[RMDB]
RNA sequence: GGGAACGACUCGAGUAGAGUCGAAAAGAGGAAGAUUUCCUCAAUAGGGAAUUCUUAAAUCCAGACGAGCAAAUGACCUACCUUAACCAUGCUGACUACAACCUGAACUCGCCACUGAUAAGUGAUGUCAUAUUUGUCCGUUCGCGGACAAAUAUGAAAAAGAAACAACAACAACAAC
Reactivity to 2A3 in 0.01 (KOAc 150mM, MgCl2 10mM, bicine 150mM(pH8.5), 24C), signal-to-noise 2, nucleotides 027 to 126: g040a000g000g030a010a080g030a220u050u010u040c010c000u000c040a040a050u230a130g000g000g000a010a010u100u070c020u040u090a180a140a070u050c010c010a020g040a120c000g050a050g130c030a010a010a130u090g040a020c020c020u050a040c030c010u030u100a030a060c030c020a010u040g010c050u020g050a080c000u060a090c050a010a020c000c000u000g030a060a010c010u000c060g100c040c020a040c030u010g080a120u080a280a000g040u010g050a070u110g060
Reactivity to DMS in 0.01 (KOAc 150mM, MgCl2 10mM, bicine 150mM(pH8.5), 24C), signal-to-noise 2, nucleotides 027 to 126: g010a090g000g010a000a060g010a100u000u010u000c010c000u010c100a080a040u010a150g000g000g000a050a010u010u000c010u000u000a050a050a120u010c040c030a070g000a110c100g000a080g020c100a020a050a100u000g010a090c070c020u010a090c040c020u010u010a060a110c080c030a040u020g010c030u000g000a020c030u000a030c090a030a060c030c040u000g010a080a080c050u000c060g000c010c020a010c050u010g020a100u000a090a050g000u010g010a090u000g000
The record gives the reactivity of an RNA of 177 nucleotides to 2A3 and DMS.
The data come from the RNA Mapping Database (RMDB), library OK2TST.
The reactions ran in a buffer of 150 mM KOAc, 10 mM MgCl2 and 150 mM bicine (pH 8.5), at 24 C.
For 2A3 the reverse transcriptase was SuperScript II with manganese.
For DMS, 1,438 sequencing reads were counted.